[RMDB]
The record gives the reactivity of an RNA of 177 nucleotides to 2A3 and DMS. It was measured as part of the RMDB library TTRDEL. For 2A3 the reverse transcriptase was SuperScript II with manganese. Conditions: 150 mM KOAc, 10 mM MgCl2 and 150 mM bicine (pH 8.5), 24 C. For DMS, 1,805 sequencing reads were counted.

RNA sequence: GGGAACGACUCGAGUAGAGUCGAAAAGAUAUGGACUAUGGGAGCUUUUGACGAUUAGUCGGAAACGACUACUCGAUAAGCUCAAUAGUCCUAAGUCAAAAGUGGAAUCCGUUCGCGGAUUCCACAAGAGAGAAUAAUCGUUCGCGAUUAUUCUCUCAAAAGAAACAACAACAACAAC
Reactivity to 2A3 in 0.01 (KOAc 150mM, MgCl2 10mM, bicine 150mM(pH8.5), 24C), signal-to-noise 3, nucleotides 027 to 126: g020a000u030a010u040g000g020a010c000u010a010u050g300g300g070a030g010c040u130u300u300u300g180a030c000g000a000u020u010a000g010u000c000g000g010a010a020a000c000g000a000c000u010a000c000u000c010g050a050u050a300a120g000c000u000c000a000a000u000a000g010u010c000c000u000a030a000g030u000c020a000a000a090a230g000u010g000g000a000a000u000c000c010g010u080u090c280g010c000g160g000a000u010u000c000c000a000c000a000a000
Reactivity to DMS in 0.01 (KOAc 150mM, MgCl2 10mM, bicine 150mM(pH8.5), 24C), signal-to-noise 2, nucleotides 027 to 126: g000a030u000a170u000g000g000a030c010u010a000u000g020g050g030a000g020c000u000u000u000u000g010a190c040g000a030u000u000a000g010u000c000g020g010a030a030a060c010g000a030c000u000a000c080u010c000g000a140u010a010a050g010c000u000c000a100a010u000a030g000u000c000c000u000a010a060g010u000c010a090a050a110a210g030u000g000g000a020a000u000c000c000g030u000u000c250g030c010g000g000a000u000u000c000c010a000c000a010a020